[RMDB]
Structure probing data (DMS and 2A3) for a 177-nucleotide construct. For 2A3 the reverse transcriptase was SuperScript II with manganese. DMS adducts were read by reverse transcription with MarathonRT. It was measured as part of the RMDB library TTRDES. For DMS, 3,142 sequencing reads were counted. The reactions ran in a buffer of 150 mM KOAc, 10 mM MgCl2 and 150 mM bicine (pH 8.5), at 24 C.
RNA sequence: GGGAACGACUCGAGUAGAGUCGAAAAGAUAUGGAGCUCCUACAGACAUGAAAUCAGGGUCGGAAACGACCCUACGUGAUUUCAACAGCUGUAGAGCUCCUAAGUCAAACACGUGUUCGCACGUGAACAAACCUAGACAGUUCGCUGUCUAGGUUUGAAAAGAAACAACAACAACAAC
Reactivity to DMS in 0.01 (KOAc 150mM, MgCl2 10mM, bicine 150mM(pH8.5), 24C), signal-to-noise 3, nucleotides 027 to 126: g010a040u010a300u020g000g000a030g040c000u000c210c140u000a010c000a010g010a040c100a300u000g000a010a010a010u010c020a020g040g000g000u000c000g010g020a060a050a170c030g010a010c000c000c000u010a000c170g050u010g000a000u000u000u000c010a070a110c200a190g000c000u000g020u000a020g010a010g000c000u000c000c000u000a000a080g010u010c020a210a160a210c040a000c000g020u020g000u000u020c230g010c010a010c010g000u000g000a090a200
Reactivity to 2A3 in 0.01 (KOAc 150mM, MgCl2 10mM, bicine 150mM(pH8.5), 24C), signal-to-noise 1, nucleotides 027 to 126: g030a000u040a050u100g000g030a010g000c020u100c060c070u110a010c000a000g040a030c140a220u300g000a010a000a000u020c020a020g020g000g020u000c000g000g010a030a050a020c020g000a020c000c000c010u020a010c040g010u030g000a010u020u000u000c040a130a050c150a090g090c010u020g010u010a000g010a010g000c010u000c000c000u000a000a000g000u000c000a000a160a000c010a000c020g000u010g020u060u060c200g050c170a000c020g000u030g010a060a000